Structure probing data (DMS and 2A3) for a 207-nucleotide construct.
It was measured as part of the RMDB library OK3TST.
The RNA was probed in 150 mM KOAc, 10 mM MgCl2 and 150 mM bicine (pH 8.5) at 24 C.
In probing experiments dimethyl sulfate is read out at A N1 and C N3, which are open when not base-paired.

RNA sequence: GGGAACGACUCGAGUAGAGUCGAAAAUCCCAUAGGUUGCCGAAUCCGAAAGGUACGGAGGAACCGCUUUUUGGGGUUAAUCUGCAGUGAAGCUGCAGUAGGGAUACCUUCUGUCCCGCACCCGACAGCUAACUCCCCAGGCAAUAAAGGAAGGAGAGCAUAAUGAUCCUUUCGAGGAUCAUUAUGCAAAAGAAACAACAACAACAAC
Reactivity to DMS in 0.01 (KOAc 150mM, MgCl2 10mM, bicine 150mM(pH8.5), 24C), signal-to-noise 2, nucleotides 027 to 156: u000c000c000c000a160u000a030g050g000u000u000g000c010c010g010a260a300u000c030c000g050a160a150a130g020g000u000a090c060g010g010a080g030g020a090a100c110c020g000c120u010u000u010u020u010g030g020g030g000u020u010a080a180u000c000u000g000c010a010g020u000g070a140a220g000c000u000g000c010a030g020u000a060g000g000g000a090u000a010c010c060u000u000c030u000g010u000c040c000c050g000c100a100c000c010c020g050a080c120a080g000c020u000a040a160c050u030c000c020c000c010a110g000g050c110a110a100u000a070a050a100g000g010a040a070g020g000a280g020a210
Reactivity to 2A3 in 0.01 (KOAc 150mM, MgCl2 10mM, bicine 150mM(pH8.5), 24C), signal-to-noise 2, nucleotides 027 to 156: u010c010c000c000a000u100a040g090g010u000u020g000c000c010g050a080a110u120c030c000g030a110a060a030g030g000u060a020c020g010g000a010g000g040a040a050c070c040g010c020u100u130u000u070u210g060g000g020g020u010u030a050a020u040c000u000g020c000a010g000u080g200a140a020g180c000u000g000c000a000g000u000a000g000g000g010a010u070a120c000c000u010u000c000u020g000u010c010c000c000g000c000a050c000c000c020g040a110c080a020g000c000u040a060a000c020u010c000c000c010c050a000g030g000c000a000a010u130a100a050a000g040g010a020a000g000g010a070g010a010